[RMDB]
RNA sequence: GGGAACGACUCGAGUAGAGUCGAAAAUGAGAACCUAUGGAAUAAAUUUAAAUGCAGAAAGUAAAACAUACUUUUCUUUGCAGCAAGAAUCGGUAAGUAGGCCGCCUGAUUCCUGUCUACGUGACUGAGGUAGGGGAUGAUUCGUCAUCCCCUACCUAAAAGAAACAACAACAACAAC
Reactivity to 2A3 in 0.01 (KOAc 150mM, MgCl2 10mM, bicine 150mM(pH8.5), 24C), signal-to-noise 2, nucleotides 027 to 126: u190g050a030g020a000a010c000c000u050a100u090g020g070a130a050u140a050a100a050u140u000u300a300a200a000u140g000c010a000g060a020a030a000g030u140a000a240a070a000c030a200u050a000c000u030u090u090u070c040u140u160u200g000c020a000g090c070a010a110g100a150a100u060c090g070g000u010a090a070g030u010a110g180g000c000c000g010c000c000u010g030a100u080u000c000c030u040g000u030c000u000a050c180g120u130g060a020c000u060g020
Reactivity to DMS in 0.01 (KOAc 150mM, MgCl2 10mM, bicine 150mM(pH8.5), 24C), signal-to-noise 2, nucleotides 027 to 126: u020g010a150g030a150a090c090c000u000a110u030g000g000a120a080u070a030a090a190u000u000u020a050a090a120u020g000c000a070g000a000a000a080g000u000a030a080a130a150c290a190u010a110c010u000u070u000u040c110u000u050u000g020c030a040g000c260a040a080g000a080a010u050c130g000g000u010a080a150g030u010a030g000g000c050c120g070c080c000u000g000a090u030u060c010c030u000g000u040c000u030a080c100g020u000g000a150c050u000g000
The data come from the RNA Mapping Database (RMDB), library OK1LIB. An RNA of 177 nucleotides, treated with 2A3 and DMS and read out base by base. The RNA was probed in 150 mM KOAc, 10 mM MgCl2 and 150 mM bicine (pH 8.5) at 24 C. Values cover nucleotides 27 to 126. DMS (dimethyl sulfate) methylates the pairing face of unpaired adenines and cytosines. DMS adducts were read by reverse transcription with MarathonRT.